[RMDB]
RNA sequence: GGGAACGACUCGAGUAGAGUCGAAAAAUUGCGGAGCUUGUGGGUACGGUUGGGCUUAGUCGAAGCACAGUCAUGCAAGUGGCUAGUUGUAAUGCUAGCUAACUCAAUGGGGCUCACUCUCCAAGUGCUUAGUCCAACCAUUCGUGGUUGGACUAAGAAAAGAAACAACAACAACAAC
Reactivity to 2A3 in 0.01 (KOAc 150mM, MgCl2 10mM, bicine 150mM(pH8.5), 24C), signal-to-noise 6, nucleotides 027 to 126: a000u210u160g040c080g010g010a030g040c120u110u070g040u030g010g000g030u040a120c110g060g000u010u010g050g020g000c080u010u030a010g040u150c040g130a080a000g000c000a000c000a020g000u010c000a010u050g080c070a100a070g030u000g000g000c010u010a110g090u070u120g120u200a140a110u170g010c000u010a010g000c000u000a020a000c000u000c020a000a030u050g080g020g140g000c000u000c000a010c000u010c000u000c000c010a030a020g050u050g040
Reactivity to DMS in 0.01 (KOAc 150mM, MgCl2 10mM, bicine 150mM(pH8.5), 24C), signal-to-noise 3, nucleotides 027 to 126: a100u020u000g010c240g010g000a040g030c300u020u020g030u000g010g000g000u010a060c080g010g020u000u000g010g000g000c240u000u000a000g000u030c060g000a060a080g020c010a080c070a010g010u010c010a040u000g030c250a110a120g000u000g010g000c000u000a060g030u000u010g020u010a090a170u010g000c000u000a190g000c010u010a000a010c000u000c020a010a040u010g010g000g000g020c020u000c030a020c050u000c000u000c010c030a080a150g000u010g010
An RNA of 177 nucleotides, treated with 2A3 and DMS and read out base by base.
Source: RMDB libraries RFM100 and RFMREP, as collected in RNAgym.
Values are in units of 0.01, from 0 to 300, in steps of 10.
DMS adducts were read by reverse transcription with MarathonRT.